[RMDB]
RNA sequence: GGGAACGACUCGAGUAGAGUCGAAAAGCCAUACAGUAGGUGGAAUUUUAUCAUAAAGCUUAUUCAUCGUUAGUUCAGCCAGGCGAUGGUCUGCAGCUGAGUAAAACAAUUCCAGUUCAUCAUCAGAAAUCAUAGGGCGGUUCGCCGCCCUAUGAUUAAAAGAAACAACAACAACAAC
Reactivity to DMS in 0.01 (KOAc 150mM, MgCl2 10mM, bicine 150mM(pH8.5), 24C), signal-to-noise 1, nucleotides 027 to 126: g000c020c020a140u010a010c200a140g020u000a050g060g010u000g000g030a060a010u020u000u000u000a110u050c030a060u010a050a140a040g000c000u030u000a050u000u000c050a010u000c070g020u000u000a150g020u020u000c110a050g000c060c090a170g000g000c030g010a030u010g010g070u010c050u010g000c190a080g030c200u000g020a140g050u020a030a030a060a090c190a050a020u000u010c030c050a040g030u000u000c100a070u020c090a140u010c180a060g000a140

The record gives the reactivity of an RNA of 177 nucleotides to DMS.